[RMDB]
RNA sequence: GGGAACGACUCGAGUAGAGUCGAAAAAAUUGAAGCGGUAUUUGGUAUUCAUGUUAACCCAUUUGCUGAUGAAGGCAUUGCAGUGAUAAGAGAUGAAGAAAUUACGGCCAGCGCAACAGAGUAUCGCGAGGACUAUGAGAUUCGUCUCAUAGUCCUCAAAAGAAACAACAACAACAAC
Reactivity to 2A3 in 0.01 (KOAc 150mM, MgCl2 10mM, bicine 150mM(pH8.5), 24C), signal-to-noise 2, nucleotides 027 to 126: a000a030u060u100g030a050a000g000c000g050g010u000a050u030u020u030g030g000u030a120u070u160c050a060u080g090u090u120a120a080c020c020c010a010u010u050u070g040c010u030g030a130u070g100a100a080g060g020c040a000u000u120g000c050a050g040u000g070a040u040a060a040g030a000g020a070u080g060a110a070g060a030a070a040u110u070a010c040g020g010c000c000a030g040c050g000c000a020a030c010a030g110a000g070u070a010u130c020g000c000
Reactivity to DMS in 0.01 (KOAc 150mM, MgCl2 10mM, bicine 150mM(pH8.5), 24C), signal-to-noise 2, nucleotides 027 to 126: a050a080u010u000g000a110a120g000c020g020g020u000a030u010u000u000g010g010u000a130u020u000c040a030u010g010u000u000a080a160c120c020c020a110u010u000u010g000c030u000g010a090u000g010a150a120g010g010c060a070u000u000g010c010a030g020u010g000a040u000a030a060g000a080g020a050u000g000a100a040g010a070a040a030u000u010a090c060g010g010c050c030a050g010c060g020c070a000a040c080a110g010a050g000u000a050u000c080g010c250

Background: An RNA of 177 nucleotides, treated with 2A3 and DMS and read out base by base. The reactions ran in a buffer of 150 mM KOAc, 10 mM MgCl2 and 150 mM bicine (pH 8.5), at 24 C. High DMS reactivity at an A or C suggests that its Watson-Crick edge is free. The DMS profile rests on 1,870 reads. Values cover nucleotides 27 to 126.